[RMDB]
Chemical mapping of a 177-nucleotide RNA with DMS and 2A3.

RNA sequence: GGGAACGACUCGAGUAGAGUCGAAAAUCGCGCACUUGGGGAAGUGGUCAGUAAUUGCCGGGGAGUGGGUAUGGGGGAAAGAGGUUGUCUGGUGCCUACUGCACCGAUGGCCAAGAUUGACAACGAAGAUAUUAAUGGAGUUCGCUCCAUUAAUAUCAAAAGAAACAACAACAACAAC
Reactivity to DMS in 0.01 (KOAc 150mM, MgCl2 10mM, bicine 150mM(pH8.5), 24C), signal-to-noise 4, nucleotides 027 to 126: u030c070g010c060g040c080a070c060u010u030g000g000g000g010a080a110g040u040g020g020u020c110a080g020u040a070a090u020u020g020c040c020g050g000g000g020a080g000u040g000g000g010u000a040u020g000g000g020g010g010a060a060a030g000a080g010g010u000u000g010u000c010u040g060g020u000g000c000c300u050a090c280u050g000c000a020c010c010g000a020u000g010g000c000c020a050a040g000a130u010u010g000a060c190a040a070c080g000a120a080
Reactivity to 2A3 in 0.01 (KOAc 150mM, MgCl2 10mM, bicine 150mM(pH8.5), 24C), signal-to-noise 9, nucleotides 027 to 126: u080c020g000c010g000c040a070c100u070u080g010g010g010g030a080a050g040u060g060g050u070c030a020g040u170a250a130u190u160g060c030c010g000g010g000g020a200g070u180g000g010g010u150a190u120g020g000g000g010g040a010a060a010g120a050g010g000u010u010g010u000c120u190g000g000u010g000c010c040u260a270c120u190g000c000a000c000c010g010a020u020g010g000c000c000a030a020g070a110u060u170g010a060c030a050a010c080g040a060a050

For DMS the reverse transcriptase was MarathonRT.